[RMDB]
RNA sequence: GGGAACGACUCGAGUAGAGUCGAAAAGAAGAGAAAGGAGACACAUGGACAGUCUCCAGAGGUUCCUAAGGCCUCGAUCGCGCCUGCCGGGAAUCAUGGACCCCCGGUUGUCCAUGAUAGAAGAAGACAUCCUCCAGCUAUUCGUAGCUGGAGGAUGAAAAGAAACAACAACAACAAC
Reactivity to 2A3 in 0.01 (KOAc 150mM, MgCl2 10mM, bicine 150mM(pH8.5), 24C), signal-to-noise 1, nucleotides 027 to 126: g070a000a000g100a000g070a000a060a050g100g060a080g050a010c100a000c060a270u110g060g000a050c000a000g000u000c000u060c000c000a000g020a000g010g000u050u170c090c090u170a120a120g040g000c000c000u030c120g020a020u040c020g000c030g000c010c000u000g000c000c000g070g000g010a010a050u050c000a050u030g060g020a050c000c000c000c000c090g050g000u030u020g000u030c000c000a000u000g070a060u030a070g190a130a050g030a000a000g020a020
Reactivity to DMS in 0.01 (KOAc 150mM, MgCl2 10mM, bicine 150mM(pH8.5), 24C), signal-to-noise 2, nucleotides 027 to 126: g070a160a140g000a070g000a060a180a120g010g010a010g080a000c030a130c120a050u020g000g010a080c080a090g000u030c000u030c000c020a110g010a030g020g030u000u000c020c050u010a130a040g010g000c000c070u040c110g030a000u020c130g000c220g020c020c020u000g000c100c140g000g000g000a080a020u000c010a040u040g010g000a030c070c100c020c060c020g000g020u010u020g000u000c010c010a000u000g000a130u040a020g010a100a120g000a130a090g000a180

This 177-nucleotide RNA was probed chemically with 2A3 and DMS. Values cover nucleotides 27 to 126. The reactions ran in a buffer of 150 mM KOAc, 10 mM MgCl2 and 150 mM bicine (pH 8.5), at 24 C. The DMS profile rests on 2,586 reads. The 2A3 profile rests on 740 reads. 2A3 is a SHAPE reagent: it acylates the 2'-hydroxyl of flexible nucleotides of all four kinds.